[RMDB]
RNA sequence: GGGAACGACUCGAGUAGAGUCGAAAAAUGGUCUUAAAAAAGAUAUUACUUCACAUUUCGCCAAGAAAGGACACAUAAUGUGUUCAGUGGGAUCUAAGGCUAUUCUUGCCAAACCAUCGAAUGAUGAAGCACUAUAACAAUUCGUUGUUAUAGUGCUAAAAGAAACAACAACAACAAC
Reactivity to 2A3 in 0.01 (KOAc 150mM, MgCl2 10mM, bicine 150mM(pH8.5), 24C), signal-to-noise 9, nucleotides 027 to 126: a000u050g030g010u040c020u050u080a120a120a040a040a020a010g080a050u110a060u110u100a070c030u240u300c030a030c010a090u060u100u080c080g030c070c030a070a050g120a160a100a040g050g010a040c010a000c000a070u290a190a080u290g000u000g000u030u030c030a030g010u040g010g040g020a010u040c020u070a030a010g010g000c000u010a040u070u060c080u060u090g050c010c010a070a050a070c040c010a020u070c040g110a190a130u260g030a040u030g030a060
Reactivity to DMS in 0.01 (KOAc 150mM, MgCl2 10mM, bicine 150mM(pH8.5), 24C), signal-to-noise 6, nucleotides 027 to 126: a030u010g000g010u000c010u010u000a000a060a100a090a100a050g010a030u030a030u030u010a060c030u010u000c040a050c050a120u000u020u000c140g000c090c090a090a090g030a050a090a080g000g000a030c060a030c070a140u030a070a040u020g000u000g010u010u000c020a030g010u000g000g000g000a070u010c120u000a020a040g000g000c010u000a030u000u010c090u000u000g020c030c020a050a090a090c150c020a010u000c030g000a070a080u040g000a030u010g010a120